[RMDB]
This 177-nucleotide RNA was probed chemically with 2A3 and DMS. The reactions ran in a buffer of 150 mM KOAc, 10 mM MgCl2 and 150 mM bicine (pH 8.5), at 24 C. For 2A3, 2,613 sequencing reads were counted.
RNA sequence: GGGAACGACUCGAGUAGAGUCGAAAACUUCGGCGACGAAGUCGUCGCAGGCCUUGCGCAGACCUUCCUUGGAACCGAAAUGGUGGAUGACCAAUGCCGCGCUCACCCCCGCCGCUUCGGCGAUGGCGUGCUGUCAUUUAUUCGUAAAUGACAGCACAAAAGAAACAACAACAACAAC
Reactivity to 2A3 in 0.01 (KOAc 150mM, MgCl2 10mM, bicine 150mM(pH8.5), 24C), signal-to-noise 2, nucleotides 027 to 126: c020u050u030c020g030g000c030g000a020c050g210a260a110g030u050c020g020u000c010g000c040a030g000g030c020c010u050u110g010c030g050c030a020g030a110c020c010u050u030c000c010u080u060g070g040a030a050c020c020g040a120a100a110u130g010g000u030g000g040a090u090g060a010c000c030a020a070u140g000c030c000g040c010g020c040u030c010a050c010c010c000c010c000g030c040c010g010c030u070u130c030g020g000c030g060a050u120g040g030c050
Reactivity to DMS in 0.01 (KOAc 150mM, MgCl2 10mM, bicine 150mM(pH8.5), 24C), signal-to-noise 3, nucleotides 027 to 126: c050u000u010c040g020g000c090g010a050c010g000a100a110g020u010c020g030u010c030g020c110a040g010g020c030c020u000u000g040c080g010c020a140g010a060c020c030u000u000c030c040u010u000g020g010a140a070c040c030g010a070a090a080u010g000g020u000g010g010a110u000g000a120c050c050a050a130u020g010c030c020g000c080g000c050u030c090a150c020c030c010c060c010g000c030c020g020c110u000u010c070g020g010c010g000a070u010g010g010c170